An RNA of 177 nucleotides, treated with DMS and 2A3 and read out base by base.

[RMDB]
RNA sequence: GGGAACGACUCGAGUAGAGUCGAAAAUAAAAAUCCCAGCUGCCAUACCCACCAUCGACAGGAGUAUGAACGUGGCCACUGACACAACUACUACAGUCAUAGUGGGAUACAGCUCAUAACAGAAAAAACUGAGACAAUGAUUCGUCAUUGUCUCAGUAAAAGAAACAACAACAACAAC
Reactivity to DMS in 0.01 (KOAc 150mM, MgCl2 10mM, bicine 150mM(pH8.5), 24C), signal-to-noise 2, nucleotides 027 to 126: u020a030a100a080a070a110u000c000c000c010a050g020c020u000g000c080c080a130u000a060c010c010c000a040c000c000a030u000c050g030a020c010a150g000g000a060g000u000a020u050g030a100a170c190g000u000g020g010c040c200a040c240u000g000a110c000a010c030a130a160c080u000a040c030u010a100c060a060g000u000c000a020u000a020g000u000g000g000g010a160u010a030c000a010g000c000u000c170a090u010a010a010c110a070g030a010a060a040a070a100
Reactivity to 2A3 in 0.01 (KOAc 150mM, MgCl2 10mM, bicine 150mM(pH8.5), 24C), signal-to-noise 2, nucleotides 027 to 126: u070a000a020a010a000a000u000c010c000c010a000g010c020u010g020c110c080a100u190a300c030c000c030a000c030c000a040u030c060g000a010c010a060g030g040a010g030u050a040u220g080a180a020c070g010u010g020g010c030c030a170c150u170g070a010c010a010c010a080a050c020u030a000c000u050a020c020a010g000u010c000a000u030a050g010u000g000g000g000a000u040a010c000a010g000c000u010c030a070u140a160a100c090a090g250a080a100a000a020a000

2A3 adducts were read by reverse transcription with SuperScript II with manganese. It was measured as part of the RMDB library M2PK90.